[RMDB]
RNA sequence: GGGAACGACUCGAGUAGAGUCGAAAACGCGUAAUUGAGCCACGAAAUAGGUAAACAUUGUAAGAGGCUUUCACCGUUUGGUGCGUGGGAGCGAUCGUGGACGCGCGAUAAGCGAGUGCGGACACCUUGGUCCAUAAUCUUUCGAGAUUAUGGACCAAAAAGAAACAACAACAACAAC
Reactivity to DMS in 0.01 (KOAc 150mM, MgCl2 10mM, bicine 150mM(pH8.5), 24C), signal-to-noise 3, nucleotides 027 to 126: c030g000c020g010u020a150a130u030u000g000a190g000c000c000a030c010g020a010a100a130u060a080g000g020u030a070a080a120c150a100u070u010g030u020a120a030g010a170g050g010c030u000u000u010c010a010c010c030g000u020u060u060g010g000u010g000c140g020u020g000g000g000a060g000c010g000a050u000c020g030u000g000g000a040c020g030c030g010c000g000a070u030a060a090g020c030g010a070g040u000g000c050g000g010a170c110a080c050c030u000
Reactivity to 2A3 in 0.01 (KOAc 150mM, MgCl2 10mM, bicine 150mM(pH8.5), 24C), signal-to-noise 4, nucleotides 027 to 126: c000g000c020g010u040a070a100u110u140g040a070g020c000c000a020c010g030a050a020a050u190a100g100g060u140a050a110a070c100a200u080u120g070u140a080a110g050a070g100g090c000u000u010u040c000a010c010c000g100u040u150u300g300g040u270g040c130g000u000g000g020g020a000g000c020g040a090u030c010g000u010g000g000a000c000g000c000g010c000g040a060u050a140a030g030c010g020a040g030u140g080c030g000g000a000c010a030c030c000u000